[RMDB]
Structure probing data (2A3) for a 177-nucleotide construct. Source: RMDB library OK1LIB, as collected in RNAgym. The reactions ran in a buffer of 150 mM KOAc, 10 mM MgCl2 and 150 mM bicine (pH 8.5), at 24 C. For 2A3, 450 sequencing reads were counted.
RNA sequence: GGGAACGACUCGAGUAGAGUCGAAAAACUUGUAUCUAUGUGACGAUGCGAUAAUUGCCUUCAACAAUAUCGAUCUUUUCACAAUGGGAGGCAAUGACGGGAGAAAAAUCACAUCUCCAUUGCAAGAGCUCCUGCAUCACUUCGGUGAUGCAGGAGCAAAAGAAACAACAACAACAAC
Reactivity to 2A3 in 0.01 (KOAc 150mM, MgCl2 10mM, bicine 150mM(pH8.5), 24C), signal-to-noise 1, nucleotides 027 to 126: a060c030u020u020g030u020a090u000c040u000a040u000g030u100g030a050c030g030a030u030g070c000g000a020u000a000a130u090u000g000c000c000u100u060c040a150a130c040a100a000u100a040u270c130g130a190u070c060u080u110u000u140c110a130c000a080a090u010g000g000g000a000g000g000c060a000a000u060g100a150c040g000g080g130a050g200a050a000a000a130a000u200c050a000c000a150u020c000u010c000c000a000u000u000g000c040a170a030g000a000